[RMDB]
Chemical mapping of a 207-nucleotide RNA with 2A3. The RNA was probed in 150 mM KOAc, 10 mM MgCl2 and 150 mM bicine (pH 8.5) at 24 C. The 2A3 profile rests on 812 reads.
RNA sequence: GGGAACGACUCGAGUAGAGUCGAAAAUGGCGAUUUCUGGACCGCGUUUGCCAACUACAGUCCGCGGGUCCAGGCGCUGCUGUGGAACCAGCCCAUGCCGUACUGGUUCUUCGCCAACGGCCGGCGCUUCUGGGUCGUCGUGAAAGUCAGCACGAUAACCACGUACGUGAUUCGUCACGUACGUGGUAAAAGAAACAACAACAACAAC
Reactivity to 2A3 in 0.01 (KOAc 150mM, MgCl2 10mM, bicine 150mM(pH8.5), 24C), signal-to-noise 1, nucleotides 027 to 156: u150g030g000c030g060a090u060u130u080c000u000g000g000a000c010c010g080c020g020u000u160u100g070c060c070a130a030c090u220a090c010a090g060u000c120c000g010c010g010g060g060u030c000c000a000g000g010c020g000c000u100g000c030u080g070u120g060g020a010a010c010c000a020g030c000c000c030a160u210g040c010c080g060u110a180c030u000g000g000u000u030c020u060u030c090g000c010c010a040a040c000g020g000c010c000g060g000c040g040c040u110u150c050u070g060g000g000u010c000g000u010c000g000u020g070a060a070a000g110u190c070a020g050c030a000c020g040a010u140a090